[RMDB]
Structure probing data (DMS and 2A3) for a 177-nucleotide construct. High 2A3 reactivity points to a flexible backbone, as in loops and unpaired stretches. The DMS profile rests on 6,360 reads. 2A3 adducts were read by reverse transcription with SuperScript II with manganese.
RNA sequence: GGGAACGACUCGAGUAGAGUCGAAAAAAGGAAUCGCCACGGGCAGCCCAAACGGCAUCCAGGGUGACCAGCGUCUUGAGGUCGAUGCGGCUGUCGGCCAGCUUGGCGCCAUACUCCGCCUUGCAGGCCUUCCCAGGAAUUUCGAUUCCUGGGAAGGAAAAGAAACAACAACAACAAC
Reactivity to DMS in 0.01 (KOAc 150mM, MgCl2 10mM, bicine 150mM(pH8.5), 24C), signal-to-noise 3, nucleotides 027 to 126: a050a080g010g020a050a030u020c040g000c040c010a110c090g010g000g000c060a070g000c000c000c020a080a100a120c040g000g020c020a060u020c030c010a130g000g000g030u010g000a090c100c120a140g000c010g000u010c000u020u000g020a080g000g030u000c030g000a090u020g010c170g000g000c020u000g000u000c030g000g020c010c000a020g010c040u000u010g000g000c010g000c120c100a040u020a080c070u040c070c010g030c020c010u010u010g000c080a080g020g000
Reactivity to 2A3 in 0.01 (KOAc 150mM, MgCl2 10mM, bicine 150mM(pH8.5), 24C), signal-to-noise 5, nucleotides 027 to 126: a000a000g130g020a080a060u110c050g030c030c010a070c080g020g020g000c020a020g020c000c010c020a080a120a010c040g020g000c010a020u000c010c010a010g060g000g020u080g060a140c060c040a040g030c010g050u090c020u030u060g030a050g000g020u020c000g020a030u070g040c070g090g000c070u030g020u030c010g000g010c020c000a020g020c010u040u060g010g000c000g000c010c000a060u120a100c040u010c020c010g010c000c000u020u050g020c050a040g000g070